[RMDB]
RNA sequence: GGGAACGACUCGAGUAGAGUCGAAAAGGUGAGCACCGGGCGUCCGGCGGCAAGCAGUGUGACGACACGAUGUAGCGCGCGCUGUGCUCCAUUGCGCGUUGGGAAUUGGCGAUACUCGUCGGUCAUGGCAUAUAGCCGGAUUCGUCCGGCUAUAUGCAAAAGAAACAACAACAACAAC
Reactivity to 2A3 in 0.01 (KOAc 150mM, MgCl2 10mM, bicine 150mM(pH8.5), 24C), signal-to-noise 5, nucleotides 027 to 126: g090g020u110g030a020g000c000a010c060c000g010g050g000c030g040u050c020c020g040g010c000g010g030c090a060a040g060c030a040g010u030g010u050g130a120c110g020a030c010a010c050g080a060u110g090u190a020g030c010g000c000g000c010g040c040u030g030u070g040c020u030c010c000a020u020u130g020c040g000c020g030u050u100g040g040g030a100a240u080u080g030g000c010g010a010u040a070c050u030c020g020u000c040g030g020u060c060a080u120g110
Reactivity to DMS in 0.01 (KOAc 150mM, MgCl2 10mM, bicine 150mM(pH8.5), 24C), signal-to-noise 3, nucleotides 027 to 126: g010g000u020g000a110g010c070a070c060c060g020g000g010c030g000u010c030c010g010g050c040g020g000c150a100a130g020c010a080g000u030g000u010g010a080c080g000a090c040a080c060g010a090u030g010u010a080g010c070g000c020g000c010g010c030u000g000u020g000c080u010c090c100a160u000u030g000c010g010c040g000u000u000g010g010g010a120a190u000u020g000g000c030g000a100u040a040c080u000c000g010u000c080g000g000u010c010a100u030g010